Notes
Structure probing data (DMS and 2A3) for a 177-nucleotide construct. The 2A3 profile rests on 2,223 reads. It was measured as part of the RMDB library OK1LIB. The DMS profile rests on 3,784 reads. DMS adducts were read by reverse transcription with MarathonRT.

RNA sequence: GGGAACGACUCGAGUAGAGUCGAAAAGACGAGCAGGCCGAUAAUCUUGUGCAGUAUGCAUGCUCGUAACUCCAGCGCACAAGUGGAAGCACAAGAUUUCAAUCCAGCAUAGCGCAGGAGCCGCAGAAAUCAUGACUCCUUUCGAGGAGUCAUGAUUAAAAGAAACAACAACAACAAC
Reactivity to DMS in 0.01 (KOAc 150mM, MgCl2 10mM, bicine 150mM(pH8.5), 24C), signal-to-noise 3, nucleotides 027 to 126: g010a050c000g000a020g020c020a030g030g010c020c300g010a030u030a060a020u000c000u000u000g000u000g000c020a180g030u020a090u010g010c040a040u010g000c040u020c010g000u010a080a100c030u020c000c000a100g000c010g020c020a090c240a120a140g020u030g000g010a090a060g000c000a000c010a030a010g000a140u010u020u020c140a120a100u010c000c010a050g020c100a160u030a130g020c040g020c010a100g010g000a000g020c040c000g000c180a120g010a140
Reactivity to 2A3 in 0.01 (KOAc 150mM, MgCl2 10mM, bicine 150mM(pH8.5), 24C), signal-to-noise 3, nucleotides 027 to 126: g100a010c010g000a020g030c010a000g020g050c030c130g130a120u180a150a030u070c020u020u000g000u000g000c020a060g120u170a100u180g030c030a000u040g020c000u000c030g000u020a000a000c000u020c000c000a010g000c000g030c000a000c020a220a040g030u030g100g040a080a010g000c020a000c000a050a000g010a000u040u170u170c080a100a080u030c020c020a020g010c020a060u090a080g010c020g000c020a020g000g010a000g010c020c050g070c010a020g080a100